[RMDB]
RNA sequence: GGGAACGACUCGAGUAGAGUCGAAAAAUCACACCUUUUUGGCAAAUGGAUCGGUUCGGCGUGGAUCCCGGACACGUCAGUUUUCCACUCUGAAAAAGGAGCAAGAACCGAUUGCACGGGCGUACCUGACUGCAAAUCAGUACGCAGAGUACGAGAAUGUAGAUGGAACUUUCGAGUUCCAUCUACAAAAAGAAACAACAACAACAAC
Reactivity to 2A3 in 0.01 (KOAc 150mM, MgCl2 10mM, bicine 150mM(pH8.5), 24C), signal-to-noise 2, nucleotides 027 to 156: a010u070c030a050c020a030c040c040u080u140u050u100u140g080g010c100a090a090a030u150g080g020a020u000c020g000g020u020u010c060g020g000c000g000u020g000g000a060u050c000c000c000g040g000a000c000a000c000g000u000c010a020g010u050u070u030u100c020c010a050c020u010c060u060g050a040a040a090a100a070g040g010a030g000c030a090a050g000a030a000c000c010g000a000u000u090g020c030a010c020g070g000g000c000g010u000a000c000c020u020g100a090c000u060g050c040a050a050a080u070c030a030g030u030a050c060g000c020a000g040a010g000u080a050c070g040a020g160a150a080
Reactivity to DMS in 0.01 (KOAc 150mM, MgCl2 10mM, bicine 150mM(pH8.5), 24C), signal-to-noise 1, nucleotides 027 to 156: a110u000c050a110c110a030c020c020u000u000u020u020u020g030g020c040a080a130a130u020g000g000a010u000c040g000g040u020u010c080g000g000c030g030u010g010g000a040u000c010c030c000g020g010a130c030a010c000g010u000c030a150g030u000u000u000u000c040c050a110c000u000c000u010g000a050a160a030a160a290g000g010a070g030c020a110a110g000a100a050c000c040g000a070u000u000g050c080a110c020g010g000g020c050g030u000a000c070c050u000g030a070c000u000g020c190a120a130a220u000c040a060g000u030a010c020g010c000a020g000a120g000u000a090c040g020a160g010a180a220
An RNA of 207 nucleotides, treated with 2A3 and DMS and read out base by base.
DMS adducts were read by reverse transcription with MarathonRT.
It was measured as part of the RMDB library OK3TST.
The reactions ran in a buffer of 150 mM KOAc, 10 mM MgCl2 and 150 mM bicine (pH 8.5), at 24 C.
For 2A3 the reverse transcriptase was SuperScript II with manganese.